Structure probing data (2A3 and DMS) for a 177-nucleotide construct. It was measured as part of the RMDB library OK1LIB. Values are in units of 0.01, from 0 to 300, in steps of 10. Values cover nucleotides 27 to 126.
[RMDB]
RNA sequence: GGGAACGACUCGAGUAGAGUCGAAAAUCAUCUAAGCUAUUAAAUGUUGAAAUAAACAACAUAAUACCACCAAUGAUGAAAAUUGCAGGGGCUAAAAAUGGAAUAGACAUAUAUAUUGAUUGUGUACCAAUCAUAGUGUUUUCGAACACUAUGAUUGAAAAGAAACAACAACAACAAC
Reactivity to 2A3 in 0.01 (KOAc 150mM, MgCl2 10mM, bicine 150mM(pH8.5), 24C), signal-to-noise 7, nucleotides 027 to 126: u010c000a000u000c010u100a080a030g020c020u000a030u060u080a130a160a070u030g010u000u000g090a110a160a150u270a110a190a040c010a000a000c010a000u120a080a030u030a050c030c070a020c040c040a070a050u130g020a010u020g050a050a050a030a080u110u080g010c030a030g010g040g000g040c040u090a080a050a030a040a030u100g030g030a040a050u040a070g110a030c050a020u160a010u070a020u020a060u180u150g110a190u080u020g030u020g020u040a050c010
Reactivity to DMS in 0.01 (KOAc 150mM, MgCl2 10mM, bicine 150mM(pH8.5), 24C), signal-to-noise 5, nucleotides 027 to 126: u000c020a060u000c020u000a130a090g020c110u000a020u020u000a030a090a070u000g000u010u010g000a090a090a140u060a090a130a140c010a010a020c000a030u010a080a060u010a080c060c040a090c060c060a010a050u000g000a050u000g000a040a080a040a060u030u000g010c120a090g010g010g000g000c090u000a010a050a040a050a030u010g010g010a060a030u010a040g010a050c060a050u030a060u030a060u040a140u010u000g000a080u020u030g000u000g020u000a060c150
For 2A3 the reverse transcriptase was SuperScript II with manganese.